[RMDB]
Record summary:
The record gives the reactivity of an RNA of 207 nucleotides to DMS and 2A3. Reactivities are given for positions 27 through 156.

RNA sequence: GGGAACGACUCGAGUAGAGUCGAAAAAGAUCGAUUACGAUCGAUCAAUGAAGCCCCUCACCCACCUCUGAAGAUCCCAGGUGGGCGAGGGAACGGAGCACGGGAUCACGAGCAGUACGCUGCUCGAAAAAGAACUAGACCUUCGGGUCUAGUUCAAGAUAAUCUCUCAGUUCGCUGAGAGAUUAUCAAAAGAAACAACAACAACAAC
Reactivity to DMS in 0.01 (KOAc 150mM, MgCl2 10mM, bicine 150mM(pH8.5), 24C), signal-to-noise 1, nucleotides 027 to 156: a140g000a030u000c000g030a090u000u010a170c250g010a150u000c000g070a040u000c010a090a070u020g010a130a240g040c160c000c000c020u050c010a030c020c000c000a000c010c020u000c020u040g020a160a190g040a140u000c030c000c000a040g070g010u010g000g000g000c050g040a030g010g020g000a000a020c140g020g020a170g060c110a120c170g050g020g000a050u010c080a300c030g060a030g000c010a050g010u000a110c290g050c000u000g020c040u000c000g010a000a120a130a180a070g000a010a000c000u000a040g020a010c000c000u000u000c270g080g010g020u000c010u000a000g000u000u000c010a000a080
Reactivity to 2A3 in 0.01 (KOAc 150mM, MgCl2 10mM, bicine 150mM(pH8.5), 24C), signal-to-noise 3, nucleotides 027 to 156: a000g010a000u000c000g000a000u020u060a090c160g020a010u000c000g000a000u000c010a000a120u160g120a070a010g080c050c000c000c000u010c010a020c000c010c000a000c010c020u050c060u080g080a130a030g000a020u000c000c000c000a010g000g000u000g000g000g000c000g000a000g000g010g010a030a030c070g070g090a080g080c100a060c120g000g010g010a000u010c030a000c020g000a000g000c020a010g020u050a020c200g030c150u010g000c020u000c000g000a050a000a000a000a000g000a000a000c000u000a000g000a000c010c000u030u100c300g110g000g000u000c000u000a000g000u000u000c000a000a000
The data come from the RNA Mapping Database (RMDB), library M2RFPK. Values are in units of 0.01, from 0 to 300, in steps of 10. The DMS profile rests on 1,459 reads.